[RMDB]
RNA sequence: GGGAACGACUCGAGUAGAGUCGAAAAGCGGCGCUGCGUGGUUAUGGCCACAAGAGUAAAAAACGUAGGCAAUUGGCGCAUCAUGCCUGAUGCGACGCUUGCCGCGUCUUAUCAGGCCUACAAAAGGAGCAUAGAAUAGAUUCGUCUAUUCUAUGCUAAAAGAAACAACAACAACAAC
Reactivity to 2A3 in 0.01 (KOAc 150mM, MgCl2 10mM, bicine 150mM(pH8.5), 24C), signal-to-noise 9, nucleotides 027 to 126: g040c040g020g010c060g010c050u050g000c040g030u030g010g020u130u130a180u300g140g000c000c000a020c020a030a080g070a020g140u200a050a050a050a020a010a010c060g020u070a250g020g000c010a010a040u040u040g020g000c020g000c010a010u030c010a010u150g180c020c110u030g000a000u000g000c000g000a000c000g000c020u020u040g020c010c010g000c000g000u000c000u020u040a070u070c030a010g020g000c000c000u070a050c040a020a100a020a030g210g030
Reactivity to DMS in 0.01 (KOAc 150mM, MgCl2 10mM, bicine 150mM(pH8.5), 24C), signal-to-noise 9, nucleotides 027 to 126: g020c100g010g010c030g020c030u000g010c140g020u000g010g010u000u010a080u010g020g010c000c010a060c090a090a110g000a100g020u010a000a060a070a070a070a040c060g010u000a070g030g010c010a030a040u000u000g010g000c010g010c020a030u000c040a060u010g020c260c190u000g000a010u000g010c060g000a010c000g000c090u000u000g010c060c050g000c000g000u000c030u000u000a050u010c060a080g010g000c000c030u000a070c130a060a060a110a120g010g000